[RMDB]
RNA sequence: GGGAACGACUCGAGUAGAGUCGAAAAGAUAUGGAUUCAGGGAGCUGUGUGUUCGGAAACGAACACUUAGCAUCGAUCUGACUGUCCUAAGUCGAUAACACGUAAGGUCUUCGGACCUUACGUGUAAUACUAACUGGGGUUUCGACCCCAGUUAGUAAAAAGAAACAACAACAACAAC
Reactivity to 2A3 in 0.01 (KOAc 150mM, MgCl2 10mM, bicine 150mM(pH8.5), 24C), signal-to-noise 2, nucleotides 027 to 126: g030a020u090a020u090g000g010a020u140u150c030a030g030g040g000a040g050c070u030g020u050g020u000g020u040u010c020g010g020a000a030a040c000g000a000a000c000a010c010u010u080a000g000c020a040u280c020g020a030u020c010u020g060a050c160u210g030u080c000c000u050a150a010g040u030c010g060a080u100a290a020c030a000c010g000u000a000a000g050g020u000c030u090u220c300g050g010a010c000c000u000u000a000c010g000u000g000u000a000a010
Reactivity to DMS in 0.01 (KOAc 150mM, MgCl2 10mM, bicine 150mM(pH8.5), 24C), signal-to-noise 4, nucleotides 027 to 126: g000a030u010a300u000g010g000a040u000u000c010a030g000g010g010a030g020c000u000g010u010g000u000g010u000u000c010g000g000a080a070a120c010g010a010a020c000a010c000u000u000a020g010c060a270u010c160g000a040u020c000u010g010a020c300u000g010u000c000c000u000a050a110g010u000c020g000a120u020a110a040c010a000c000g000u000a010a010g000g010u000c000u010u010c240g030g000a000c000c000u000u000a000c000g000u000g010u000a020a070